RNA sequence: GGGAACGACUCGAGUAGAGUCGAAAAGGUAGCAGAGAAGAGACUAGUCUUCAGACUAGAUAGUAUCACACUACCGGUACAUAGUAGAGACAUACAUAGAUGGGUAUGACACAUCAGAGCUGCCAUGCGUGCAGUAAUUAUUCGUAAUUACUGCACGAAAAGAAACAACAACAACAAC
Reactivity to DMS in 0.01 (KOAc 150mM, MgCl2 10mM, bicine 150mM(pH8.5), 24C), signal-to-noise 9, nucleotides 027 to 126: g010g020u000a010g030c130a130g010a110g010a120a150g010a150g010a150c010u000a010g010u000c000u010u010c270a190g010a020c000u000a010g010a100u000a060g020u000a070u000c040a090c130a290c030u000a030c020c020g010g000u000a080c120a090u000a060g010u010a040g000a110g010a080c090a050u000a040c060a070u010a090g000a070u000g010g000g010u010a040u000g000a110c100a050c060a050u000c050a070g000a120g000c040u000g010c020c030a070u010g010
Reactivity to 2A3 in 0.01 (KOAc 150mM, MgCl2 10mM, bicine 150mM(pH8.5), 24C), signal-to-noise 9, nucleotides 027 to 126: g010g000u010a010g000c100a020g050a010g030a190a020g090a020g040a080c010u010a010g010u010c010u170u230c180a050g010a010c000u010a000g010a030u060a030g050u040a020u050c010a020c020a020c100u060a030c010c000g000g000u040a020c030a040u130a030g080u050a020g040a010g010a100c020a050u100a020c020a020u100a060g110a100u110g080g000g030u080a060u130g040a030c020a000c000a090u080c040a020g040a010g080c020u030g010c010c010a040u120g070
The record gives the reactivity of an RNA of 177 nucleotides to DMS and 2A3. Values cover nucleotides 27 to 126. For 2A3 the reverse transcriptase was SuperScript II with manganese. The reactions ran in a buffer of 150 mM KOAc, 10 mM MgCl2 and 150 mM bicine (pH 8.5), at 24 C.